[RMDB]
RNA sequence: GGGAACGACUCGAGUAGAGUCGAAAAUCCUAAGUCAGCUGCAAACACUCACAGAGUACCGACGUAUUCAUUGGCAUUCUAUGAAGCAUCGGAAACGAUGUGGAGAAUGCAAUGAAUACGUCGGUACUCUGUGAGUGGACGUAUAGCUGAUAUGGAACAUUCUCAUCAUCUUCGGAUGAUGAGAAUGAAAAGAAACAACAACAACAAC
Reactivity to DMS in 0.01 (KOAc 150mM, MgCl2 10mM, bicine 150mM(pH8.5), 24C), signal-to-noise 2, nucleotides 027 to 156: u010c000c010u000a070a280g010u010c000a020g020c010u010g010c090a240a220a220c000a020c000u000c010a000c010a030g010a060g050u000a000c010c000g000a020c000g000u000a010u000u000c000a010u010u010g070g030c010a020u000u000c010u000a150u030g040a170a300g010c000a000u020c000g040g020a140a080a290c010g020a000u000g010u010g000g010a010g030a010a040u000g010c010a010a000u000g000a070a010u000a000c000g000u000c010g000g010u000a010c000u000c000u010g020u000g010a020g030u010g000g010a030c160g010u000a080u000a040g030c010u000g030a010u000a170u000g000g010a140a280